An RNA of 177 nucleotides, treated with DMS and 2A3 and read out base by base. DMS adducts were read by reverse transcription with MarathonRT. The RNA was probed in 150 mM KOAc, 10 mM MgCl2 and 150 mM bicine (pH 8.5) at 24 C.

RNA sequence: GGGAACGACUCGAGUAGAGUCGAAAAGAUAUGGAAAUGUCACACGAGCGUCACAUCGGAAACGAUGUGAAACGCGAUGAGUGUACAUUUCCUAAGUCAAAAGAAAGUAAGGUUCGCCUUACUUUCACAUUUAUUGACCCUUCGGGGUCAAUAAAUGAAAAGAAACAACAACAACAAC
Reactivity to DMS in 0.01 (KOAc 150mM, MgCl2 10mM, bicine 150mM(pH8.5), 24C), signal-to-noise 3, nucleotides 027 to 126: g000a010u000a020u010g000g010a020a010a000u000g010u000c300a010c000a010c000g000a030g030c000g020u000c000a020c010a010u000c000g020g000a010a010a020c000g010a010u010g000u000g000a020a060a050c020g020c010g020a140u010g000a060g030u000g010u000a020c000a010u000u000u000c000c000u000a000a060g000u000c000a160a050a140a130g000a020a030a000g000u000a010a020g000g020u000u020c300g010c000c000u000u000a000c000u000u000u000c000a220
Reactivity to 2A3 in 0.01 (KOAc 150mM, MgCl2 10mM, bicine 150mM(pH8.5), 24C), signal-to-noise 1, nucleotides 027 to 126: g000a000u010a000u040g000g010a000a020a000u030g030u140c180a010c000a000c110g100a060g040c000g020u010c000a010c000a010u000c010g000g010a000a010a000c000g000a000u010g020u010g000a060a080a000c000g000c010g030a140u300g060a030g010u000g020u000a000c000a000u020u000u000c000c000u000a000a000g010u000c010a010a000a070a220g010a010a000a010g000u010a010a000g050g040u040u190c300g180c050c000u010u000a000c010u010u000u010c000a000